[RMDB]
RNA sequence: GGGAACGACUCGAGUAGAGUCGAAAACACCACAUGAAGGUCCUUCUGUUGCCGCAGCGCCACAUGUGGGCGUGCCGUGAUAAUUUGGGGAAAUAGAGCCGUUACCACGGCUUGAAUGAACGUGAUGGCCGCGUGAGUAUUUCGAUACUCACGCGGCAAAAGAAACAACAACAACAAC
Reactivity to 2A3 in 0.01 (KOAc 150mM, MgCl2 10mM, bicine 150mM(pH8.5), 24C), signal-to-noise 1, nucleotides 027 to 126: c140a040c000c000a000c000a000u150g130a110a000g010g120u300c000c000u080u280c080u090g120u130u170g010c000c000g000c000a000g000c080g120c000c000a170c010a000u300g000u300g000g040g040c170g080u000g000c000c000g130u000g000a150u100a230a230u000u270u090g150g000g000g110a000a040a000u300a130g000a000g100c000c000g000u000u000a000c000c000a000c000g000g000c050u000u000g000a100a130u130g040a050a140c000g080u150g000a220u100g090

Chemical mapping of a 177-nucleotide RNA with 2A3. The data come from the RNA Mapping Database (RMDB), library OK1LIB. For 2A3, 411 sequencing reads were counted.